[RMDB]
RNA sequence: GGGAACGACUCGAGUAGAGUCGAAAAGCCCCUCGCUCGUAUCUCCGAGAGGAGACGAGAAGGAGGUGGAUCUCCCUUUGCCAUCCGAGGGGAUUGCGUCCUCCUUACGGAUGCCCAGGUCGGACCGCUGACAAUUUGAGUUCGCUCAAAUUGUCAGAAAAGAAACAACAACAACAAC
Reactivity to 2A3 in 0.01 (KOAc 150mM, MgCl2 10mM, bicine 150mM(pH8.5), 24C), signal-to-noise 1, nucleotides 027 to 126: g050c020c000c010c010u000c020g030c000u000c000g070u120a170u030c020u000c000c010g050a060g010a050g060g010a010g000a010c030g000a010g010a000a060g190g020a000g010g060u280g020g020a060u050c090u050c030c000c000u030u110u100g010c030c000a000u000c000c000g020a020g030g000g000g010a010u020u180g080c050g040u010c000c010u050c010c000u000u060a040c010g000g000a010u020g050c010c030c010a040g000g010u020c000g020g010a040c020c010g040
Reactivity to DMS in 0.01 (KOAc 150mM, MgCl2 10mM, bicine 150mM(pH8.5), 24C), signal-to-noise 2, nucleotides 027 to 126: g000c000c000c000c020u000c030g000c010u000c010g000u010a140u000c000u010c000c010g010a300g000a260g010g000a010g000a000c010g000a030g000a060a040g010g000a060g020g000u030g030g000a110u000c090u000c020c010c000u010u000u000g010c140c020a020u000c040c010g010a180g000g010g010g000a060u010u000g030c150g020u010c030c010u000c000c050u000u010a100c060g000g000a030u000g000c090c040c030a090g020g000u030c030g010g000a190c040c030g020